[RMDB]
RNA sequence: GGGAACGACUCGAGUAGAGUCGAAAAGGAAUCUUGCACGCCCUCGCUCAAGCCUUCGUCACUCCAAACGUUUCGGCGAGAAGCAGGCCAUUAUCGCCGGCAUGGCGGCCGACGCGCUGGGCUGGCGGUUUCGCAAGGGAUUCGUCCCUUGCGAAACAAAAGAAACAACAACAACAAC
Reactivity to 2A3 in 0.01 (KOAc 150mM, MgCl2 10mM, bicine 150mM(pH8.5), 24C), signal-to-noise 1, nucleotides 027 to 126: g060g040a170a080u080c020u110u120g000c050a000c090g000c020c020c000u020c020g020c000u100c050a080a010g040c020c010u090u050c040g010u010c000a070c100u070c030c020a090a080a120c040g040u000u040u060c050g000g000c030g000a030g020a030a000g010c080a030g080g000c000c030a140u260u220a070u090c070g000c030c000g000g020c010a040u070g070g000c020g050g000c030c020g000a060c020g000c020g060c050u030g020g000g060c000u000g000g030c000g000
Reactivity to DMS in 0.01 (KOAc 150mM, MgCl2 10mM, bicine 150mM(pH8.5), 24C), signal-to-noise 2, nucleotides 027 to 126: g010g020a090a100u000c040u000u010g020c030a070c080g000c040c010c030u010c070g010c040u000c130a080a190g030c000c050u000u000c050g000u010c060a070c120u030c050c100a110a080a180c120g020u010u010u030c110g000g020c010g030a070g000a090a070g030c040a070g000g010c060c080a050u000u000a040u000c120g020c030c000g020g000c030a050u020g010g010c110g000g040c050c020g030a090c170g010c040g010c050u020g010g010g000c070u000g010g000c020g000
This 177-nucleotide RNA was probed chemically with 2A3 and DMS. The RNA was probed in 150 mM KOAc, 10 mM MgCl2 and 150 mM bicine (pH 8.5) at 24 C. Values cover nucleotides 27 to 126. Source: RMDB library OK2TRN, as collected in RNAgym. The 2A3 profile rests on 1,130 reads.